[RMDB]
RNA sequence: GGGAACGACUCGAGUAGAGUCGAAAAGUAUCCCUAGAUGAUAAAACACCGCACAUGGCUCGUAAGAGCGGUUAAAUUAGCCAGUAAUGCAAAUUACGCGAGGUAACGCAUGGCCUAGGCUCGUUAGAAAAGGGAGAAUCCUUCGGGAUUCUCCCAACUACCAUGAGUUGUUCGCAACUCAUGGUAGAAAAGAAACAACAACAACAAC
Reactivity to DMS in 0.01 (KOAc 150mM, MgCl2 10mM, bicine 150mM(pH8.5), 24C), signal-to-noise 1, nucleotides 027 to 156: g040u000a100u000c010c000c000u000a130g000a170u000g000a100u000a080a170a130a190c090a040c030c040g020c010a140c040a140u040g020g020c000u000c040g020u010a110a090g000a070g040c000g000g010u000u000a040a020a130u000u010a060g010c020c010a170g010u000a040a050u000g050c070a060a060a060u010u010a030c050g010c040g070a060g010g010u000a050a050c060g040c040a040u000g000g000c030c010u000a100g010g000c030u000c040g000u000u000a120g010a050a050a100a160g000g040g020a050g020a050a010u000c000c000u010u010c300g090g070g000a000u000u000c000u000c010c000c000a000a010
Reactivity to 2A3 in 0.01 (KOAc 150mM, MgCl2 10mM, bicine 150mM(pH8.5), 24C), signal-to-noise 1, nucleotides 027 to 156: g030u040a080u030c000c000c010u010a060g050a180u120g020a100u220a080a120a070a010c030a040c000c000g070c000a030c080a180u180g090g020c020u000c070g030u020a100a130g000a000g050c010g000g000u030u040a000a120a120u040u030a000g000c040c000a000g000u050a050a030u040g010c050a000a060a130u080u030a020c040g000c080g100a090g190g000u010a010a000c000g000c030a030u040g020g070c010c010u000a030g010g000c000u030c050g020u070u050a080g160a040a100a010a000g010g010g000a000g000a000a000u010c000c000u010u030c170g010g020g000a000u000u040c010u000c000c000c010a000a000
Structure probing data (DMS and 2A3) for a 207-nucleotide construct. The data come from the RNA Mapping Database (RMDB), library M2RFPK. 2A3 adducts were read by reverse transcription with SuperScript II with manganese. The reactions ran in a buffer of 150 mM KOAc, 10 mM MgCl2 and 150 mM bicine (pH 8.5), at 24 C.